[RMDB]
RNA sequence: GGGAACGACUCGAGUAGAGUCGAAAAGAUAUGGAGAUUCCCAUUGCGAGGAUAUCGGAAACGAUAUCUCCCCACCGAACUACAAUGAACAUCUCCUAAGUCAAAGCAUUAUCUUCGGAUAAUGCAACGGUUAUAUAUACUUCGGUAUAUAUAACCGAAAAGAAACAACAACAACAAC
Reactivity to DMS in 0.01 (KOAc 150mM, MgCl2 10mM, bicine 150mM(pH8.5), 24C), signal-to-noise 8, nucleotides 027 to 126: g000a020u000a170u010g000g000a010g000a030u000u000c200c160c010a060u000u000g010c130g020a060g010g010a010u000a000u000c000g010g000a050a050a110c010g010a010u000a000u000c020u010c020c010c070c120a220c170c090g000a070a070c090u010a240c030a020a020u000g010a090a100c300a030u000c010u000c000c000u000a030a110g000u000c040a070a100a130g010c000a000u010u000a010u000c000u000u010c210g020g000a010u010a010a000u000g000c000a030a050
Reactivity to 2A3 in 0.01 (KOAc 150mM, MgCl2 10mM, bicine 150mM(pH8.5), 24C), signal-to-noise 7, nucleotides 027 to 126: g010a010u060a030u130g010g000a010g010a020u080u080c100c110c030a010u030u120g130c100g020a050g050g000a050u000a010u020c000g010g040a050a040a020c030g000a000u000a010u030c050u090c030c020c010c020a170c070c090g080a150a060c060u170a070c240a050a080u070g030a140a020c030a100u000c000u000c000c010u020a090a010g030u050c070a180a060a050g000c000a010u010u010a010u010c010u040u090c260g090g000a010u010a000a000u000g000c000a000a000
Structure probing data (DMS and 2A3) for a 177-nucleotide construct. The 2A3 profile rests on 17,872 reads. For 2A3 the reverse transcriptase was SuperScript II with manganese.